Source: RMDB library OK3TST, as collected in RNAgym. The record gives the reactivity of an RNA of 207 nucleotides to 2A3.
RNA sequence: GGGAACGACUCGAGUAGAGUCGAAAAAGGGUAAACGCGCCUGAUCUGAUUAACCAGGCUCAUCUGCUCGACGCUUUCUAACGGGCAUUUGCCGCGAUAGGAUGGGUCGCCGAAUAGGGGGAUGUUAUCUGGGAAUUUCACGCCGCCAUUCCUCUCAGUUCGUACUCGAUUUCGAUCGAGUACGAACAAAAGAAACAACAACAACAAC
Reactivity to 2A3 in 0.01 (KOAc 150mM, MgCl2 10mM, bicine 150mM(pH8.5), 24C), signal-to-noise 2, nucleotides 027 to 156: a030g040g000g000u120a120a120a040c100g000c040g000c050c000u010g010a050u050c020u060g090a200u030u210a100a110c010c000a010g020g000c040u030c020a110u010c010u060g150c080u080c040g010a050c010g040c140u040u090u040c010u010a050a040c010g010g010g010c020a130u150u120u230g000c030c010g160c020g070a040u010a010g000g000a010u060g000g120g000u000c000g030c090c020g110a130a090u200a160g000g010g000g000g000a020u000g000u080u020a160u080c090u070g040g020g080a080a060u090u050u110c030a020c070g010c030c010g060c020c000a050u030u070c010c000u000c020u030c010a040
For 2A3, 600 sequencing reads were counted.